[RMDB]
RNA sequence: GGGAACGACUCGAGUAGAGUCGAAAACACAGGCACUUCGGUGCCUGUGAAAAAGCGUACUACGGGAGAAAUGAUACUACCCACCGUUUCCCAAAUAGGAAACGAGGUAUAUUUCGAAGAACGUAUCGCAAAAAAGACAUGUGUUCGCACAUGUCAAGUCCCAAAUACGGUUCGCCGUAUUUGGGACAAAAGAAACAACAACAACAAC
Reactivity to 2A3 in 0.01 (KOAc 150mM, MgCl2 10mM, bicine 150mM(pH8.5), 24C), signal-to-noise 2, nucleotides 027 to 156: c040a000c000a000g010g000c000a000c030u090u110c300g130g000u000g000c010c010u000g010u000g010a000a000a000a000a010g000c000g020u060a010c060u000a000c010g020g040g050a030g060a030a010a030u240g290a120u070a020c000u170a120c030c000c000a020c000c010g020u000u000u040c030c010c000a150a300a120u220a080g010g010a000a000a000c010g000a000g000g000u000a020u000a010u020u000u000c090g130a250a020g000a090a000c000g010u010a040u190c030g000c000a050a130a160a000a070a000g000a000c010a000u020g000u000g050u010u120c180g010c090a040c000a010u030g000u030c000a000a000